RNA sequence: GGGAACGACUCGAGUAGAGUCGAAAAAAUAAUAUUUCCUAGACCGAGAGGUCCGGGUAAACCGCUGAACCGCUUUCAUGCUUGGGAUUGUGAACUGAAACUGUUCACAUGAACCUGCAUUGAUUACCCUCUAAUGAUUAUUCGUAAUCAUUAGAGGAAAAGAAACAACAACAACAAC
Reactivity to DMS in 0.01 (KOAc 150mM, MgCl2 10mM, bicine 150mM(pH8.5), 24C), signal-to-noise 6, nucleotides 027 to 126: a040a050u040a080a070u020a150u020u000u000c000c000u010a090g010a050c040c010g020a200g010a210g000g010u000c010c040g000g000g010u020a030a080a090c090c030g010c110u010g010a110a120c070c030g000c130u000u020u000c030a020u000g000c010u000u010g010g010g010a130u000u000g010u010g010a020a000c000u010g000a150a080a120c300u010g000u000u000c000a000c000a000u000g000a300a190c000c020u000g000c000a000u000u020g010a030u030u010a080c180
Reactivity to 2A3 in 0.01 (KOAc 150mM, MgCl2 10mM, bicine 150mM(pH8.5), 24C), signal-to-noise 9, nucleotides 027 to 126: a000a000u300a060a030u140a130u050u040u030c000c000u000a020g010a020c000c010g030a020g010a030g110g010u000c010c010g000g000g040u090a120a080a030c020c020g010c120u070g090a060a040c040c010g030c050u050u090u050c020a010u010g000c000u070u080g000g000g020a030u030u000g000u000g000a000a010c010u020g050a160a050a060c150u140g010u000u000c000a000c000a000u000g010a020a060c000c010u000g000c010a010u010u090g020a020u040u160a100c020